This 177-nucleotide RNA was probed chemically with 2A3 and DMS. For 2A3, 7,351 sequencing reads were counted. It was measured as part of the RMDB library M2PK50. Conditions: 150 mM KOAc, 10 mM MgCl2 and 150 mM bicine (pH 8.5), 24 C.
[RMDB]
RNA sequence: GGGAACGACUCGAGUAGAGUCGAAAAGCGGUACACUUCGGUGUACCGCAAAACCGGAAUAAACAUGGGCCCAUGUGCCGAAACGGAAGGGCGUCCGCCCAAAAACGACGCCGUUCGCGGCGUCGAAUCAGAAUACAAGGUUCGCCUUGUAUUCUGAAAAAGAAACAACAACAACAAC
Reactivity to 2A3 in 0.01 (KOAc 150mM, MgCl2 10mM, bicine 150mM(pH8.5), 24C), signal-to-noise 5, nucleotides 027 to 126: g000c010g010g000u000a000c010a000c010u050u070c180g030g000u010g010u000a000c000c000g000c000a010a000a000a000c020c010g040g090a140a140u240a100a100a040c070a130u120g040g020g030c060c030c070a090u120g060u140g060c010c020g040a180a100a010c090g020g050a040a080g070g000g010c030g070u080c070c050g030c000c000c020a000a100a010a000a030c010g000a010c000g010c010c010g010u030u040c200g000c000g060g000c010g000u000c000g000a000a010
Reactivity to DMS in 0.01 (KOAc 150mM, MgCl2 10mM, bicine 150mM(pH8.5), 24C), signal-to-noise 4, nucleotides 027 to 126: g010c000g020g000u000a000c000a010c010u000u010c190g020g020u000g010u000a000c000c000g030c000a000a010a060a120c080c020g010g010a150a080u020a060a070a070c090a090u000g000g010g020c020c020c060a090u000g010u000g020c020c020g010a040a110a090c100g010g010a100a090g010g000g000c020g000u010c060c070g010c010c000c010a030a040a050a090a120c010g000a020c000g010c000c000g000u000u010c160g020c000g010g000c010g000u000c010g000a020a040